[RMDB]
Description
Structure probing data (2A3) for a 207-nucleotide construct. For 2A3, 1,267 sequencing reads were counted. 2A3 adducts were read by reverse transcription with SuperScript II with manganese. The RNA was probed in 150 mM KOAc, 10 mM MgCl2 and 150 mM bicine (pH 8.5) at 24 C. It was measured as part of the RMDB library RNAMAK.
RNA sequence: GGGAACGACUCGAGUAGAGUCGAAAAGGGGUCCCAAACUAUCGAUACUUCGCAACAGCUAUACUGAAGCCUCCACGGUAUAGACAUGCGAACGUAUCGACGAAUUUGGGACGGAGGCACCCAAAGUCUUCCGUACACUUCGGUGUACGGAAGACAACACACGUAACUGCUUCGGCAGUUACGUGUGAAAAGAAACAACAACAACAAC
Reactivity to 2A3 in 0.01 (KOAc 150mM, MgCl2 10mM, bicine 150mM(pH8.5), 24C), signal-to-noise 2, nucleotides 027 to 156: g060g000g020g020u040c000c000c000a010a020a000c220u260a160u190c000g000a000u010a010c000u030u000c000g040c010a090a140c060a300g010c020u000a010u010a010c000u020g050a150a030g020c000c000u000c010c010a020c000g000g010u000a000u000a000g110a150c050a150u120g010c000g010a000a000c050g020u000a010u000c000g010a010c090g190a120a200u010u000u000g020g010g000a010c020g000g000a010g000g000c000a020c060c010c000a100a030a000g000u000c010u000u000c000c010g000u010a010c000a010c010u090u130c290g190g000u010g000u010a000c000g000g010a000a000g000a000c000a000a000